[RMDB]
RNA sequence: GGGAACGACUCGAGUAGAGUCGAAAAGUCUCCUAGAGAGCUUGGCCGUCGGGCCUUACACCCCGACUUGCUGAGUUUCUCUACGAGAGUCCCUUUCCCAGCCAGAGGUGGCUGGUCAAACAAUACCAAAACUCUUGCUAGUUCGCUAGCAAGAGAAGUACUUGCGAAGGUUCGCCUUCGCAAGUACAAAAGAAACAACAACAACAAC
Reactivity to 2A3 in 0.01 (KOAc 150mM, MgCl2 10mM, bicine 150mM(pH8.5), 24C), signal-to-noise 1, nucleotides 027 to 156: g010u010c000u030c000c010u010a000g000a000g000a000g000c000u020u000g010g010c000c010g010u000c010g010g050g010c000c010u040u070a060c070a040c000c000c000c000g010a000c070u110u260g000c000u000g030a010g020u020u300u000c000u010c000u000a010c000g040a000g000a000g070u010c010c000c010u000u110u040c010c000c000a000g020c010c000a000g000a030g060g000u000g000g040c000u040g070g020u140c020a000a000a030c040a110a000u020a000c000c000a020a000a020a180c020u000c000u000u010g000c000u000a000g030u100u010c300g000c130u010a000g000c030a020a000g000a000g000a010a030